An RNA of 177 nucleotides, treated with DMS and 2A3 and read out base by base.
The RNA was probed in 150 mM KOAc, 10 mM MgCl2 and 150 mM bicine (pH 8.5) at 24 C.
2A3 adducts were read by reverse transcription with SuperScript II with manganese.
The 2A3 profile rests on 9,268 reads.
The DMS profile rests on 4,993 reads.
In probing experiments dimethyl sulfate is read out at A N1 and C N3, which are open when not base-paired.
[RMDB]
RNA sequence: GGGAACGACUCGAGUAGAGUCGAAAAGUGUACAUGAACUUAUAAGACGAGUACAACGUAUGGUACAUCACAAGUAUCUUAUUAGUUUUUAAGUACCAUGUGUACAUAGACUUAUGAGACGAGUACAGACCAAUAAUUACUUCGGUAAUUAUUGGUCAAAAGAAACAACAACAACAAC
Reactivity to DMS in 0.01 (KOAc 150mM, MgCl2 10mM, bicine 150mM(pH8.5), 24C), signal-to-noise 5, nucleotides 027 to 126: g010u010g000u010a000c010a180u010g010a140a070c010u000u000a010u000a010a010g000a070c030g000a200g000u000a000c020a050a120c220g020u010a010u000g000g020u000a010c000a080u010c240a070c160a070a060g010u010a070u010c180u010u010a070u010u010a120g000u000u000u010u000u020a050a130g020u000a010c000c000a020u000g020u000g020u000a000c000a060u010a240g000a070c010u000u000a010u000g000a000g000a080c040g000a110g010u000a010c020a060
Reactivity to 2A3 in 0.01 (KOAc 150mM, MgCl2 10mM, bicine 150mM(pH8.5), 24C), signal-to-noise 7, nucleotides 027 to 126: g060u030g010u000a000c010a020u110g050a270a040c000u010u000a010u000a020a010g010a010c020g010a010g010u000a010c030a090a020c110g160u160a020u040g000g000u010a010c010a050u100c050a040c010a120a050g060u050a100u090c040u100u160a180u130u150a110g090u040u040u010u060u140a130a030g000u000a000c000c010a010u030g030u010g000u010a000c000a010u300a020g020a000c000u010u010a000u020g010a000g020a030c030g020a030g010u000a010c000a010